[RMDB]
RNA sequence: GGGAACGACUCGAGUAGAGUCGAAAAAAAAAAGAUAUGGAAUGUCCUGCUGCCGUUCGUUUGACGUGGACUCGGAAACGAGUCCACCGAGAACGGAACUACAGUGGGACAUUCCUAAGUCAAAAAACAUUGACUAUAGCUUCGGCUAUAGUCAAUGAAAAGAAACAACAACAACAAC
Reactivity to DMS in 0.01 (KOAc 150mM, MgCl2 10mM, bicine 150mM(pH8.5), 24C), signal-to-noise 1, nucleotides 027 to 126: a000a040a050a060a120a070g030a010u010a280u030g000g000a010a000u000g000u010c010c010u000g070c000u000g000c040c040g000u000u000c010g030u010u000u010g010a300c300g000u000g000g000a030c000u010c020g050g000a050a010a070c000g000a030g020u020c000c000a000c000c000g000a190g000a000a000c000g000g010a040a000c000u020a220c000a000g030u000g000g040g010a000c000a000u000u000c010c000u000a000a030g000u000c010a000a070a100a050a060a140